Structure probing data (DMS and 2A3) for a 177-nucleotide construct. The RNA was probed in 150 mM KOAc, 10 mM MgCl2 and 150 mM bicine (pH 8.5) at 24 C. DMS (dimethyl sulfate) methylates the pairing face of unpaired adenines and cytosines. Source: RMDB library M2PK50, as collected in RNAgym. For 2A3 the reverse transcriptase was SuperScript II with manganese.

[RMDB]
RNA sequence: GGGAACGACUCGAGUAGAGUCGAAAAUCUGGACCGUUCGCGGUCCAGAAACUACCGAGAAUGCGACUCGGUAUAUAAACGCAACCCUUGCAAACAAGGGAACACUCUGCUGCUUCGGCAGCAGAAAGCUCUUAAAGGAAUUCGUUCCUUUAAGAGCAAAAGAAACAACAACAACAAC
Reactivity to DMS in 0.01 (KOAc 150mM, MgCl2 10mM, bicine 150mM(pH8.5), 24C), signal-to-noise 3, nucleotides 027 to 126: u000c000u000g010g000a010c000c000g020u000u010c210g020c010g040g000u020c000c000a000g000a000a050a090c050u010a230c010c010g000a000g040a060a040u000g020c030g020a100c010u000c000g010g000u000a040u010a020u010a020a030a020c020g000c030a070a300c000c000c010u020u000g000c300a100a130a270c030a020a000g000g010g020a100a070c150a060c160u000c010u000g010c000u000g030c010u010u010c230g040g010c010a000g000c010a010g020a010a090a140
Reactivity to 2A3 in 0.01 (KOAc 150mM, MgCl2 10mM, bicine 150mM(pH8.5), 24C), signal-to-noise 4, nucleotides 027 to 126: u000c000u000g010g010a000c000c000g030u040u040c280g010c010g100g010u000c010c000a000g000a010a000a000c010u030a030c000c010g000a000g000a070a090u060g010c020g050a040c010u000c000g000g060u010a000u010a000u010a020a010a000c010g010c000a040a140c010c000c000u020u010g050c140a170a200a200c010a040a090g000g000g020a030a000c030a020c020u040c010u010g010c000u000g000c000u020u040c180g100g000c010a000g010c000a000g000a000a000a000